[RMDB]
RNA sequence: GGGAACGACUCGAGUAGAGUCGAAAAGAUAUGGAGCGUGUACGGGCUCAACAGCUUCUUCGGAAACGAAGAAGACAUGAGCAGUACCGCUCCUAAGUCAAACAACAUCACGUUCGCGUGAUGUUGAGAUUGCCAUCCUGUUCGCAGGAUGGCAAUCAAAAGAAACAACAACAACAAC
Reactivity to 2A3 in 0.01 (KOAc 150mM, MgCl2 10mM, bicine 150mM(pH8.5), 24C), signal-to-noise 2, nucleotides 027 to 126: g030a000u040a010u140g020g010a040g000c030g000u300g020u240a000c050g110g300g050c020u010c000a020a020c040a040g060c010u010u040c000u010u010c010g000g040a100a000a050c000g010a000a020g010a010a010g000a000c010a070u020g000a010g020c000a000g000u000a000c000c030g000c010u000c000c000u000a000a010g000u020c010a000a080a110c000a000a000c010a000u000c000a000c010g060u100u120c300g000c010g180u010g000a010u000g000u000u000g020a010
Reactivity to DMS in 0.01 (KOAc 150mM, MgCl2 10mM, bicine 150mM(pH8.5), 24C), signal-to-noise 2, nucleotides 027 to 126: g020a020u010a300u010g040g000a000g030c020g000u020g040u010a000c000g060g020g040c010u010c020a070a030c300a190g000c000u000u000c000u000u010c000g010g000a220a090a240c010g020a020a010g010a020a000g000a080c120a200u000g000a010g010c000a230g020u000a000c040c000g000c000u000c000c000u000a000a100g000u000c010a110a150a300c010a010a010c000a000u000c000a000c000g050u000u070c210g030c000g030u000g000a020u000g020u000u000g000a010

Structure probing data (2A3 and DMS) for a 177-nucleotide construct. The RNA was probed in 150 mM KOAc, 10 mM MgCl2 and 150 mM bicine (pH 8.5) at 24 C. The 2A3 profile rests on 3,516 reads.